[RMDB]
RNA sequence: GGGAACGACUCGAGUAGAGUCGAAAAACCACGGCAACUUCCCAAAGGAUGUGGAGGACACGAUCCUCACCGCGGUGAAGAAGGCCACGCCGGCCCUCAUCCUGAUAGGGAGCGGUAUUCGCGGUGGCAAACUGCUGCAAUUCGUUGCAGCAGUUUGAAAAGAAACAACAACAACAAC
Reactivity to 2A3 in 0.01 (KOAc 150mM, MgCl2 10mM, bicine 150mM(pH8.5), 24C), signal-to-noise 2, nucleotides 027 to 126: a010c020c000a010c030g050g010c030a030a060c020u040u030c010c000c000a020a040a020g050g000a060u060g000u090g070g010a040g070g100a020c040a000c240g060a180u020c000c000u030c010a030c030c010g100c080g020g030u100g050a060a050g080a050a040g050g000c010c010a000c050g100c020c040g000g040c000c020c010u000c000a040u010c000c020u050g030a140u180a120g010g000g000a010g110c070g020g020u110a150u040u140c050g000c030g050g000u000g010g000
Reactivity to DMS in 0.01 (KOAc 150mM, MgCl2 10mM, bicine 150mM(pH8.5), 24C), signal-to-noise 3, nucleotides 027 to 126: a140c040c000a090c030g030g010c030a120a100c070u000u010c010c010c010a060a220a060g010g000a020u000g020u000g010g010a100g000g010a150c070a090c150g000a120u000c010c010u000c010a020c050c020g020c090g000g000u020g000a100a070g020a050a060g010g000c030c030a090c150g000c130c120g000g000c030c020c010u000c030a060u000c030c010u020g010a140u010a120g000g030g000a030g020c070g000g000u000a070u010u000c070g010c020g000g010u000g010g000